[RMDB]
RNA sequence: GGGAACGACUCGAGUAGAGUCGAAAAAGCCUUGAUCUCGGCCCAGGGAGCUGACAUCCCAGGCCACAGCCUCAGGGCUGGCCGGCAUGCUCCAAGGCCCCUCAUGACCCCCAUGCUCUGCUCUGCCAGCUUCUAGAAGCCAUCGAGCAAGGCGGAGGAACUAAGAGUCAUUCGUGACUCUUAGUUCAAAAGAAACAACAACAACAAC
Reactivity to DMS in 0.01 (KOAc 150mM, MgCl2 10mM, bicine 150mM(pH8.5), 24C), signal-to-noise 2, nucleotides 027 to 156: a170g020c010c040u020u000g010a070u000c020u000c040g070g060c020c000c040a200g050g000g000a050g020c000u000g040a120c120a130u010c040c010c040a170g030g020c010c010a120c090a070g020c020c030u010c150a140g040g010g030c010u000g000g030c010c020g040g000c040a110u020g010c030u000c030c000a090a100g040g000c010c040c060c080u000c050a070u010g010a220c030c000c000c000c010a120u010g010c010u010c000u000g010c040u020c050u010g010c060c050a190g010c010u000u000c070u000a180g010a070a070g020c010c020a090u000c060g010a090g000c000a040a050g000g000c020g000g000a100g040
Reactivity to 2A3 in 0.01 (KOAc 150mM, MgCl2 10mM, bicine 150mM(pH8.5), 24C), signal-to-noise 2, nucleotides 027 to 156: a000g050c030c020u070u070g070a130u050c040u010c170g010g030c010c010c010a180g020g050g000a010g010c060u090g090a140c050a150u100c040c070c000a090g000g000c060c030a060c070a020g000c000c000u080c070a110g050g000g130c010u000g000g010c010c000g000g040c020a060u160g010c010u000c020c010a010a000g020g000c000c000c000c000u060c040a160u290g180a290c020c000c010c000c000a000u060g000c010u000c010u010g000c000u040c010u050g020c040c000a020g000c020u030u040c020u080a030g030a050a000g010c000c010a090u160c050g010a030g020c000a000a020g000g060c000g000g010a030g020